[RMDB]
RNA sequence: GGGAACGACUCGAGUAGAGUCGAAAAGCAGAGACGGUGGCCGAACUCACCGAGGCGAAAGAGGAACUGGAUAAGCGUCUGUCGGAACUCGAAAGUCAGGGCAAGACGCCGAAGACGCUUUCGGAUGCGAACACCGAUGCCGAAGAGUGGGAACCCACAACUGACUAUCGUUCGCGAUAGUCAGUUGAAAAGAAACAACAACAACAAC
Reactivity to DMS in 0.01 (KOAc 150mM, MgCl2 10mM, bicine 150mM(pH8.5), 24C), signal-to-noise 2, nucleotides 027 to 156: g010c020a120g020a150g010a110c020g030g020u020g020g070c030c010g010a110a090c030u020c000a070c040c030g010a150g000g000c020g000a080a090a150g010a130g000g020a090a120c020u000g020g030a030u000a020a030g000c000g030u010c000u000g000u000c000g050g000a110a100c020u000c040g000a110a120a130g010u010c130a120g000g010g010c050a030a130g000a060c060g020c010c070g020a150a050g010a100c030g030c030u000u010u000c000g030g010a100u000g010c030g020a040a070c030a210c000c010g020a150u000g000c020c020g020a070a040g000a080g030u020g000g010g000a090a080c010c000c040a250
Reactivity to 2A3 in 0.01 (KOAc 150mM, MgCl2 10mM, bicine 150mM(pH8.5), 24C), signal-to-noise 3, nucleotides 027 to 156: g020c000a000g000a000g030a070c040g050g000u020g020g040c070c040g070a090a050c020u010c040a000c010c040g010a020g000g010c020g030a050a050a020g050a040g030g050a080a040c020u050g040g020a040u030a140a000g000c000g000u000c020u070g300u040c010g010g020a030a070c030u060c120g070a100a080a020g060u080c080a060g040g080g000c070a090a030g030a020c050g000c010c000g010a020a000g010a010c030g010c000u030u030u010c020g000g000a020u070g060c030g020a060a000c020a010c000c050g040a060u130g030c010c030g030a060a030g010a020g020u010g000g010g020a020a030c010c030c000a100
This 207-nucleotide RNA was probed chemically with DMS and 2A3. Conditions: 150 mM KOAc, 10 mM MgCl2 and 150 mM bicine (pH 8.5), 24 C. For DMS, 2,696 sequencing reads were counted.